[RMDB]
RNA sequence: GGGAACGACUCGAGUAGAGUCGAAAAGAAGGCACUUUCGAGUGCCUUCAUGGGGAGCUCAGGUCUCGCUCCCUUGCAAACUCCCUAAGGGAGGAGACCUAAUUAGGUGCACUUUCGAGUGCACCAAGAUUUAAACCUACUUCGGUAGGUUUAAAUCAAAAGAAACAACAACAACAAC
Reactivity to DMS in 0.01 (KOAc 150mM, MgCl2 10mM, bicine 150mM(pH8.5), 24C), signal-to-noise 4, nucleotides 027 to 126: g010a010a010g010g010c000a000c000u000u000u010c160g000a010g030u000g010c000c000u000u000c010a040u010g000g000g020g000a140g010c090u010c100a030g000g010u000c000u000c000g000c000u000c010c000c000u000u000g010c170a070a070a200c140u000c010c000c010u010a060a050g020g000g010a020g020g000a000g010a010c000c000u000a070a080u020u010a070g010g010u000g000c000a010c000u000u000u020c160g000a020g020u000g000c010a000c000c000a020a020
Reactivity to 2A3 in 0.01 (KOAc 150mM, MgCl2 10mM, bicine 150mM(pH8.5), 24C), signal-to-noise 4, nucleotides 027 to 126: g000a010a010g000g000c030a000c020u040u070u160c280g100a010g010u000g010c010c000u000u000c010a000u010g020g000g000g000a040g020c050u060c160a010g030g010u000c010u000c020g180c010u010c000c010c010u000u000g040c050a080a070a100c030u070c010c010c000u060a060a070g030g010g000a030g000g030a010g010a000c000c000u010a000a090u110u150a030g000g000u000g000c000a000c010u030u070u090c270g100a010g000u000g000c000a000c000c000a010a000